RNA sequence: GGGAACGACUCGAGUAGAGUCGAAAAGUUUUGGUGCUUGACAGGAACGUUCGUAUAGUACGAGAGGAACUACGAACGGGUGCCACUGGUGUAUCGGUUGUCCGAGAGGGCAUGUGCCGAGCAGCUACCAAAUGAAUAUCUUCGGAUAUUCAUUUGGAAAAGAAACAACAACAACAAC
Reactivity to 2A3 in 0.01 (KOAc 150mM, MgCl2 10mM, bicine 150mM(pH8.5), 24C), signal-to-noise 5, nucleotides 027 to 126: g040u030u060u150u160g020g010u030g010c020u060u100g080a060c060a160g110g090a140a040c020g000u000u010c000g000u000a010u010a030g000u010a010c010g000a000g000a040g090g000a020a010c010u000a010c000g000a000a000c020g020g000g000u030g020c010c010a070c060u060g070g010u100g060u080a250u150c010g000g010u090u040g010u000c000c020g010a030g030a030g030g010g020c050a030u130g100u140g100c010c000g000a000g010c020a010g000c010u080a090
Reactivity to DMS in 0.01 (KOAc 150mM, MgCl2 10mM, bicine 150mM(pH8.5), 24C), signal-to-noise 2, nucleotides 027 to 126: g010u000u000u010u000g010g020u000g000c010u000u010g010a090c100a090g000g010a130a170c010g010u000u000c000g000u000a000u000a070g010u000a160c000g000a220g000a210g000g000a110a120c190u000a010c000g010a020a000c010g010g000g010u000g000c020c030a080c180u000g010g010u000g000u010a110u000c020g010g010u000u000g020u000c010c010g010a160g000a190g000g010g010c010a040u020g020u000g020c010c000g010a050g010c070a060g000c050u000a150

This 177-nucleotide RNA was probed chemically with 2A3 and DMS. High 2A3 reactivity points to a flexible backbone, as in loops and unpaired stretches. The DMS profile rests on 8,566 reads. Source: RMDB library RFMREP, as collected in RNAgym.